Source: RMDB library RNAMAK, as collected in RNAgym.
Chemical mapping of a 207-nucleotide RNA with 2A3 and DMS.
For 2A3 the reverse transcriptase was SuperScript II with manganese.
DMS adducts were read by reverse transcription with MarathonRT.
RNA sequence: GGGAACGACUCGAGUAGAGUCGAAAAGGCUAUCUUCGGAUAGCCAAUCGGGCGUACUACUCGGUGCGAGGGUACGGAGGCUUCCCAAAUAGGAAGCUUAAGUACCUACCCACCGAACUACACCGAGUAUCGCACUCUCGGGCGAUUCGUCGCCCAAUUCACUGGAAUACUUCGGUAUUCCAGUGAAAAAAGAAACAACAACAACAAC
Reactivity to 2A3 in 0.01 (KOAc 150mM, MgCl2 10mM, bicine 150mM(pH8.5), 24C), signal-to-noise 3, nucleotides 027 to 156: g010g010c000u010a000u010c020u070u120c300g110g010a000u010a010g000c000c000a000a020u040c030g010g040g010c160g030u020a030c050u010a020c020u050c000g000g000u010g010c080g010a180g030g000g040u010a000c020g020g000a030g050g000c000u000u000c010c010c020a180a260a040u250a080g000g000a000a000g020c030u080u050a030a000g000u000a000c000c000u020a030c000c000c000a000c000c010g030a060a030c030u040a020c060a020c010c000g000a010g000u030a090u180c010g000c040a050c020u030c000u030c050g080g240g000c000g030a050u090u010c090g030u050c080g180c030c020c000a000a070
Reactivity to DMS in 0.01 (KOAc 150mM, MgCl2 10mM, bicine 150mM(pH8.5), 24C), signal-to-noise 1, nucleotides 027 to 156: g000g020c000u000a000u000c000u000u000c300g000g000a000u000a030g060c010c010a000a040u000c000g010g040g050c030g010u020a050c210u010a110c110u000c020g000g000u020g000c030g010a300g030g050g100u000a010c040g050g010a230g010g000c000u000u000c000c000c030a040a140a210u010a100g000g040a020a000g030c000u020u020a080a190g010u000a020c050c000u000a090c100c050c030a140c010c000g040a060a120c010u000a030c010a070c000c080g000a040g050u000a150u000c040g020c090a170c030u040c000u000c100g020g000g000c050g020a170u000u000c160g010u020c020g010c000c000c000a010a040